The record gives the reactivity of an RNA of 207 nucleotides to 2A3 and DMS.
The 2A3 profile rests on 4,779 reads.
It was measured as part of the RMDB library OK3TST.
RNA sequence: GGGAACGACUCGAGUAGAGUCGAAAAAUCUGCGACACCAAAGAGCAGGCGAUUAUGCAGCAAACCGUUCUUGGUGGCGAUCUUGUCGAAUAUUUCCGCAAGCCUGAAGCGUUUAAGGUGAACUGGCCGGAAGGCAUGGAUAUCAACGGCGCGUUAGCGUGGUAAAAGUGUUCGCACUUUUACCACGAAAAGAAACAACAACAACAAC
Reactivity to 2A3 in 0.01 (KOAc 150mM, MgCl2 10mM, bicine 150mM(pH8.5), 24C), signal-to-noise 6, nucleotides 027 to 156: a000u070c050u100g040c020g030a030c000a010c030c030a060a090a030g030a010g020c170a140g020g030c030g030a040u130u140a070u300g100c100a070g010c060a110a070a060c020c040g020u020u020c010u010u030g010g000u000g010g000c010g020a020u020c040u050u090g020u030c010g030a090a060u090a100u140u120u020c020c010g020c080a050a020g000c010c010u060g020a050a000g010c020g040u030u080u190a070a030g030g000u030g030a060a030c020u050g080g010c020c000g080g040a040a030g020g000c010a040u070g000g000a050u030a010u130c020a050a020c030g010g000c010g000c010g040u040u090a070g030
Reactivity to DMS in 0.01 (KOAc 150mM, MgCl2 10mM, bicine 150mM(pH8.5), 24C), signal-to-noise 3, nucleotides 027 to 156: a070u000c050u000g010c000g030a060c000a040c010c010a030a040a130g030a110g020c010a160g080g030c030g020a170u010u000a090u000g020c140a190g040c070a090a110a090c020c010g010u000u000c000u000u000g020g020u000g000g010c000g000a100u000c060u010u000g030u010c050g000a150a110u000a100u000u000u000c020c030g030c070a130a160g000c080c010u010g010a130a080g030c060g010u000u000u000a090a070g010g030u010g010a040a170c060u000g020g020c030c020g040g010a130a120g030g000c010a060u010g000g010a130u000a080u000c020a050a110c030g010g000c000g030c000g020u000u000a100g010